Source: RMDB library OK1LIB, as collected in RNAgym. The record gives the reactivity of an RNA of 177 nucleotides to 2A3.

RNA sequence: GGGAACGACUCGAGUAGAGUCGAAAAAUCCCUUAAAAGGGACGGCAGGGAAGGACUGCAUCUUGAAGAGGCACUAAUCCUUGCUUCAAAGAUAGCAAGCUGUAAGGCAAUAGUUGCCGAACUAUGCGACCCAUAGUGCAUUCGUGCACUAUGGGUCAAAAGAAACAACAACAACAAC
Reactivity to 2A3 in 0.01 (KOAc 150mM, MgCl2 10mM, bicine 150mM(pH8.5), 24C), signal-to-noise 3, nucleotides 027 to 126: a000u030c000c000c030u050u110a120a080a000a020g070g000g060a050c040g040g000c000a040g040g130g100a120a010g050g040a020c050u020g000c020a010u020c000u090u100g140a260a180g020a070g040g000c050a050c180u090a090a100u270c000c030u030u070g100c000u000u020c030a080a120a010g080a020u140a060g030c030a070a000g030c030u100g020u230a090a030g040g000c040a070a020u180a110g180u140u040g000c000c020g000a010a000c020u020a090u150g060c040